[RMDB]
RNA sequence: GGGAACGACUCGAGUAGAGUCGAAAAUUACAACUUCGGUUGUAAGAAAAGGGGUCGAAAGAUUGAGGCUUUUGACGAGCUGAAGCCUCCACGGCUCGAUAAGCUACCCACCAAUACUUUCGACGGAGGCACCCACGCGAUGCCAUUCGUGGCAUAAAUGAUUUGGGAGAUUCGUCUCCCAAAUCAUAAAAGAAACAACAACAACAAC
Reactivity to 2A3 in 0.01 (KOAc 150mM, MgCl2 10mM, bicine 150mM(pH8.5), 24C), signal-to-noise 3, nucleotides 027 to 156: u010u000a010c010a020a010c020u050u090c230g130g000u010u000g000u000a010a000g090a000a100a010a020g250g020g050g010u000c000g000a020a000a000g020a000u030u040g050a060g070g050c040u080u080u140u180g200a100c080g000a000g000c010u010g010a060a020g000c020c000u000c000c000a010c000g000g000c000u000c020g030a060u040a190a000g000c020u070a160c100c050c040a050c010c020a030a010u230a300c040u000u010u000c010g000a010c010g000g000a000g000g010c000a020c000c000c010a030c040g100c050g090a030u030g020c010c020a030u080u120c160g110u090g000g000c000a000u080a010a190
Reactivity to DMS in 0.01 (KOAc 150mM, MgCl2 10mM, bicine 150mM(pH8.5), 24C), signal-to-noise 1, nucleotides 027 to 156: u000u000a020c020a020a010c000u000u020c140g120g060u000u000g000u000a000a070g000a090a050a070a000g010g000g030g050u010c040g090a070a000a030g030a100u000u000g010a180g010g000c000u000u000u000u000g000a210c120g010a070g080c000u000g000a110a100g060c000c010u010c010c030a300c010g030g020c000u000c020g030a100u000a070a010g000c010u000a060c010c020c050a300c050c000a050a060u000a090c010u000u000u000c010g000a000c010g000g030a070g050g010c020a120c060c020c000a100c300g050c100g050a110u020g000c000c000a210u000u000c210g050u010g010g000c020a070u010a040a090
Structure probing data (2A3 and DMS) for a 207-nucleotide construct. The 2A3 profile rests on 2,296 reads.